[RMDB]
RNA sequence: GGGAACGACUCGAGUAGAGUCGAAAAGUAGAAUUUGUCAAGCAAAACCCCAAAACCUUACACUGAGAGCAUUUAGCCUGAUUACUCUUUAAAUCAAAUCAGGCAAUAGAGAGAAACUCGAGAGGUGAAACGGGAGUAAUGUUCGCAUUACUCCCAACCUAAUAGUGUCCUUCGGGACACUAUUAGGAAAAGAAACAACAACAACAAC
Reactivity to 2A3 in 0.01 (KOAc 150mM, MgCl2 10mM, bicine 150mM(pH8.5), 24C), signal-to-noise 2, nucleotides 027 to 156: g030u040a010g050a200a090u090u010u110g070u070c050a000a080g020c020a020a090a080a140c040c040c020c030a000a110a040a070c050c010u130u130a070c080a040c080u140g090a020g000a010g030c030a020u020u000u070a020g020c020c000u020g000a010u000u060a060c010u020c060u130u220u160a040a060a020u180c090a010a000a050u000c000a000g000g000c000a000a000u020a000g020a000g020a000g020a040a070a010c020u020c020g040a080g010a010g120g000u070g050a100a080a020c090g000g000g000a000g000u000a000a000u000g020u030u060c180g000c050a000u000u000a000c000u010c000c010c000a000a000
Reactivity to DMS in 0.01 (KOAc 150mM, MgCl2 10mM, bicine 150mM(pH8.5), 24C), signal-to-noise 1, nucleotides 027 to 156: g000u000a140g000a050a120u000u010u000g020u000c010a150a140g000c050a070a090a060a110c060c010c000c010a070a060a170a050c070c010u000u000a100c050a080c120u000g010a110g000a100g060c030a300u000u000u000a140g000c040c000u070g010a070u000u020a050c040u020c070u010u000u000a020a050a110u000c040a040a110a050u000c040a000g060g000c010a010a130u000a090g020a170g000a120g000a120a070a030c010u000c060g020a070g010a060g040g010u010g000a120a090a070c090g010g000g000a040g010u000a010a000u010g010u000u010c300g010c030a030u000u000a020c000u000c000c020c000a010a010